Chemical mapping of a 207-nucleotide RNA with 2A3. Source: RMDB library OK3TST, as collected in RNAgym.
[RMDB]
RNA sequence: GGGAACGACUCGAGUAGAGUCGAAAAAAAAUGCAGUUACAAACAACAUGCCGCCACCAGCAUACACGGUGUCAAGUAGCUGUUCUCAAUAAUAGGGUUGAUCGACGCUCUUCGUAAUAAUAUGUUGAUUGGCGCAUCAUAAAAUGCUGAGGAACUAAGAUCACAUCUGUUUCGACAGAUGUGAUCUAAAAGAAACAACAACAACAAC
Reactivity to 2A3 in 0.01 (KOAc 150mM, MgCl2 10mM, bicine 150mM(pH8.5), 24C), signal-to-noise 1, nucleotides 027 to 156: a000a000a000a000u080g000c060a090g010u090u080a060c110a010a170a000c090a030a050c030a180u140g120c080c000g090c000c000a140c000c070a020g040c080a070u150a080c060a000c080g160g000u020g090u160c040a060a060g000u000a000g060c010u010g070u120u000c060u000c020a010a010u020a160a050u080a130g110g100g000u030u040g000a030u090c050g010a000c020g070c000u000c050u180u110c040g000u010a000a050u020a180a060u020a040u300g010u010u010g060a100u020u020g030g010c080g000c000a010u000c000a060u300a130a070a070a000u100g040c070u070g040a030g050g010a030a020c030u160a030